This 177-nucleotide RNA was probed chemically with 2A3 and DMS.
For 2A3 the reverse transcriptase was SuperScript II with manganese.
Reactivities are rounded to 0.1 and cut off at 0 and 3.
For DMS, 2,999 sequencing reads were counted.
Source: RMDB library OK2TRN, as collected in RNAgym.

[RMDB]
RNA sequence: GGGAACGACUCGAGUAGAGUCGAAAACAUUUACUCACCUGCUCAUGCAUUCAGCCACGAACUGGAUGCUUGCGCUCAGCACACACUCUGUGCAAGGACCUGGAGAUGCAGAGACUGAGAGAAAGGGCACAACCAGAGAAUUCGUUCUCUGGUUGUGAAAAGAAACAACAACAACAAC
Reactivity to 2A3 in 0.01 (KOAc 150mM, MgCl2 10mM, bicine 150mM(pH8.5), 24C), signal-to-noise 3, nucleotides 027 to 126: c000a040u160u180u230a140c060u040c050a090c000c030u030g000c000u020c020a020u030g000c000a010u000u000c000a020g000c020c050a210c200g090a210a050c080u000g000g010a000u000g000c000u010u020g000c020g030c030u010c030a020g040c040a020c010a000c010a020c080u110c040u080g040u030g000c040a050a050g100g010a080c030c070u120g080g040a090g010a060u110g000c020a000g040a030g060a150c050u060g000a020g000a000g060a070a050a030g020g010g000
Reactivity to DMS in 0.01 (KOAc 150mM, MgCl2 10mM, bicine 150mM(pH8.5), 24C), signal-to-noise 4, nucleotides 027 to 126: c100a090u010u000u000a080c050u010c040a150c100c070u000g000c020u000c030a060u000g000c010a010u000u000c010a010g000c050c040a170c300g000a140a190c010u000g000g010a000u000g000c010u000u000g000c150g000c040u000c080a090g000c070a020c050a050c120a140c170u000c040u010g030u000g000c020a120a110g020g010a100c070c050u000g010g000a070g010a070u000g020c050a010g010a080g000a090c080u000g000a070g010a120g010a030a050a050g000g000g020